[RMDB]
Conditions: 150 mM KOAc, 10 mM MgCl2 and 150 mM bicine (pH 8.5), 24 C. The record gives the reactivity of an RNA of 177 nucleotides to 2A3 and DMS. Values are in units of 0.01, from 0 to 300, in steps of 10. For 2A3 the reverse transcriptase was SuperScript II with manganese.

RNA sequence: GGGAACGACUCGAGUAGAGUCGAAAAACGAUCUCGUCAAAACUCGCCAUGUACUUUUCAUCCCGCUCAAUCACGACAUAAUGCAGGCCUUCACGCUUCAUACGCGGGUCAUAGUUGGCAAAGUACCCGGUGAGCUGUAAUUCGUUACAGCUCACCGAAAAGAAACAACAACAACAAC
Reactivity to 2A3 in 0.01 (KOAc 150mM, MgCl2 10mM, bicine 150mM(pH8.5), 24C), signal-to-noise 1, nucleotides 027 to 126: a000c040g040a030u020c040u030c040g060u050c020a000a000a000a130c050u040c030g020c030c000a100u140g030u060a070c030u000u000u000u070c020a070u050c000c020c000g060c010u000c030a050a120u090c030a040c050g120a050c030a090u210a120a010u200g030c050a030g040g070c020c000u070u120c050a020c060g020c000u030u040c010a040u080a110c030g000c010g070g010g000u010c000a010u030a070g130u020u050g040g040c000a080a020a000g010u020a070c020c090
Reactivity to DMS in 0.01 (KOAc 150mM, MgCl2 10mM, bicine 150mM(pH8.5), 24C), signal-to-noise 1, nucleotides 027 to 126: a040c180g010a090u020c060u010c070g000u020c040a010a100a160a090c080u020c100g000c020c040a090u000g020u000a070c040u000u000u010u000c050a160u000c000c010c010g040c080u010c150a070a030u000c060a050c130g020a100c140a080u000a050a080u000g050c110a120g000g010c000c040u010u000c140a050c060g010c060u000u000c130a050u010a070c210g000c000g000g000g000u000c060a020u000a140g020u000u020g000g010c070a030a020a060g010u000a090c050c130